[RMDB]
RNA sequence: GGGAACGACUCGAGUAGAGUCGAAAAGCGUUACCAGCCCAAUACUUAGCGUCUGACCAAUAUGUGCUAAUUGGACUACCAGCUUGAGCACGACGGUCAAAUACGUACCAUGUACAUUGACCAGCAGAUCGCAGUGAACGUUCGCGUUCACUGCGAUAAAAGAAACAACAACAACAAC
Reactivity to 2A3 in 0.01 (KOAc 150mM, MgCl2 10mM, bicine 150mM(pH8.5), 24C), signal-to-noise 3, nucleotides 027 to 126: g030c000g100u180u120a080c030c020a020g060c020c000c020a080a040u170a140c100u060u050a040g030c000g060u010c000u010g050a060c000c000a060a070u010a080u270g000u040g000c000u020a070a040u020u050g020g020a020c040u120a240c030c000a030g110c100u040u150g100a020g010c000a000c010g130a080c140g020g000u000c010a010a010a010u110a000c020g000u000a070c090c080a040u260g000u020a060c020a130u000u100g000a040c000c000a040g050c000a020g030
Reactivity to DMS in 0.01 (KOAc 150mM, MgCl2 10mM, bicine 150mM(pH8.5), 24C), signal-to-noise 2, nucleotides 027 to 126: g020c070g030u000u010a080c120c000a060g000c090c000c100a090a050u040a050c200u000u000a100g070c050g000u030c010u030g000a130c020c050a140a120u040a070u000g000u010g050c010u000a010a010u120u000g040g000a120c150u000a080c100c060a010g010c050u010u020g010a020g000c000a040c040g040a070c120g060g030u000c000a060a070a040u030a070c100g000u000a010c080c270a230u070g000u020a000c020a070u000u000g060a110c000c000a020g040c090a080g010

Notes:
Chemical mapping of a 177-nucleotide RNA with 2A3 and DMS. For DMS, 1,301 sequencing reads were counted. The RNA was probed in 150 mM KOAc, 10 mM MgCl2 and 150 mM bicine (pH 8.5) at 24 C.